[RMDB]
Notes:
Conditions: 150 mM KOAc, 10 mM MgCl2 and 150 mM bicine (pH 8.5), 24 C. This 207-nucleotide RNA was probed chemically with DMS and 2A3. It was measured as part of the RMDB library VIROID. For 2A3, 4,926 sequencing reads were counted. For DMS, 2,938 sequencing reads were counted.
RNA sequence: GGGAACGACUCGAGUAGAGUCGAAAAUUCUCUAUCUUCCUUGCUUCGGGGCGAGGGUGUUUAGCCCUUGGAACCGCAGUUGGUUCCUCGGAACUAAACUCGUGGUUCCUGUGGUUCACACCUGACCUCCUGAGCAGAAAAGAAAAAAGAAUUGCGGCAUAUGUAAUGCCUUCGGGCAUUACAUAUGAAAAGAAACAACAACAACAAC
Reactivity to DMS in 0.01 (KOAc 150mM, MgCl2 10mM, bicine 150mM(pH8.5), 24C), signal-to-noise 2, nucleotides 027 to 156: u000u000c020u000c000u000a300u000c040u000u000c000c010u000u000g000c010u010u020c300g020g000g020g020c000g030a300g000g000g020u000g010u000u010u000a060g030c010c010c020u030u000g060g000a000a030c000c000g050c030a150g040u000u010g020g000u000u000c000c000u010c210g060g010a040a000c000u010a050a020a010c030u010c150g070u000g010g020u000u000c000c010u000g040u000g050g010u000u000c300a030c020a100c000c000u020g000a300c300c010u000c010c000u010g020a050g000c000a030g000a020a010a050a040g000a010a070a150a120a120a090g010a020a070u000u000g030c050g010g000
Reactivity to 2A3 in 0.01 (KOAc 150mM, MgCl2 10mM, bicine 150mM(pH8.5), 24C), signal-to-noise 2, nucleotides 027 to 156: u030u000c010u020c020u020a070u030c010u030u050c010c020u070u100g000c010u050u050c020g010g000g000g010c010g010a020g020g040g000u000g020u010u120u060a030g010c000c000c010u020u040g010g010a000a000c000c000g000c010a010g000u010u000g010g010u000u000c000c010u010c170g070g010a000a000c010u150a240a060a070c000u040c150g010u010g020g000u000u000c000c000u000g010u090g000g010u030u030c050a000c000a000c000c000u020g030a030c000c010u000c000c000u000g000a010g000c000a000g020a010a120a000a000g000a010a040a010a010a000a000g070a050a070u110u100g100c100g070g000